This 177-nucleotide RNA was probed chemically with 2A3 and DMS. For DMS the reverse transcriptase was MarathonRT. The DMS profile rests on 1,835 reads. For 2A3 the reverse transcriptase was SuperScript II with manganese. The data come from the RNA Mapping Database (RMDB), library OK2TST. The RNA was probed in 150 mM KOAc, 10 mM MgCl2 and 150 mM bicine (pH 8.5) at 24 C.

RNA sequence: GGGAACGACUCGAGUAGAGUCGAAAACGGUGACACCAUGCUGAUCACCGGGUUCGGCGUGUACCCGAACCUGGGCGUGGUGGACGCGUUCGCCACCGUGCGCCACGGUGAUCGCCAGCGCAGCGUACAUGCCUCACGGUUUCGACCGUGAGGCAUGAAAAGAAACAACAACAACAAC
Reactivity to 2A3 in 0.01 (KOAc 150mM, MgCl2 10mM, bicine 150mM(pH8.5), 24C), signal-to-noise 2, nucleotides 027 to 126: c030g090g040u030g020a030c030a020c020c010a060u150g000c030u170g040a190u090c030a030c050c000g000g020g040u000u000c000g000g020c120g010u220g100u180a060c020c020c000g000a000a020c000c010u020g060g050g000c020g040u060g000g020u050g030g040a050c020g070c030g150u180u200c030g000c000c000a010c010c010g060u110g070c030g000c020c020a060c030g000g000u010g050a120u000c000g020c020c010a020g000c010g030c010a070g060c020g060u070a050
Reactivity to DMS in 0.01 (KOAc 150mM, MgCl2 10mM, bicine 150mM(pH8.5), 24C), signal-to-noise 2, nucleotides 027 to 126: c070g010g020u000g030a130c010a040c050c060a050u010g000c030u000g010a110u010c110a210c030c020g000g000g000u000u000c000g000g010c040g020u030g000u010a080c300c000c000g000a010a020c010c010u000g040g040g020c010g020u000g000g000u000g000g000a030c080g020c150g000u000u020c050g010c030c010a020c020c010g050u000g050c030g010c020c060a300c110g030g000u020g010a040u000c000g000c030c030a050g010c060g010c020a040g000c050g000u000a200